[RMDB]
Structure probing data (2A3 and DMS) for a 207-nucleotide construct.
The reactions ran in a buffer of 150 mM KOAc, 10 mM MgCl2 and 150 mM bicine (pH 8.5), at 24 C.
For DMS, 1,384 sequencing reads were counted.
It was measured as part of the RMDB library M2RFPK.
In probing experiments dimethyl sulfate is read out at A N1 and C N3, which are open when not base-paired.

RNA sequence: GGGAACGACUCGAGUAGAGUCGAAAAGUUAGGCGAGGCUCCUAUACAAACACAGGUUGCUGAUCUGACGACGUCGAGAGACGCCCAAGAUUAGGACAGGAUAUAUCAAACCAAGGUAUAUCCCCAUAAAACUCGGAACACUUCGGUGUUCCGAGAAGAAACUUCAUUGGUUCGCCAAUGAAGUUUCAAAAGAAACAACAACAACAAC
Reactivity to 2A3 in 0.01 (KOAc 150mM, MgCl2 10mM, bicine 150mM(pH8.5), 24C), signal-to-noise 2, nucleotides 027 to 156: g010u020u010a020g000g010c060g080a110g000g010c040u020c030c010u080a080u050a180c080a010a180a020c130a000c060a120g040g100u230u190g060c010u040g010a080u000c010u010g010a040c040g000a020c020g000u000c010g000a010g010a000g000a120c000g010c000c000c000a010a010g030a060u160u180a030g040g020a010c030a090g000g000a000u000a000u010a000u020c040a130a100a090c110c040a130a080g000g000u010a000u000a000u000c020c000c000c000a060u180a110a170a050a040c010u000c000g000g000a020a000c000a010c000u060u080c240g080g000u000g010u000u000c000c000g000a000g000a000a010
Reactivity to DMS in 0.01 (KOAc 150mM, MgCl2 10mM, bicine 150mM(pH8.5), 24C), signal-to-noise 1, nucleotides 027 to 156: g010u000u000a010g030g020c070g030a090g030g010c040u000c000c010u000a100u010a140c140a110a020a110c010a040c110a060g020g040u000u000g030c010u030g020a030u000c010u010g000a150c020g000a030c010g000u000c000g000a300g000a300g000a030c000g000c000c030c050a280a090g000a010u000u000a040g020g000a170c090a000g000g020a020u000a020u000a010u000c000a100a070a300c170c080a060a270g000g000u000a000u000a000u000c000c000c010c000a030u020a040a110a180a120c000u000c010g010g030a050a050c000a020c020u020u000c300g000g080u010g000u010u000c000c000g010a000g030a020a050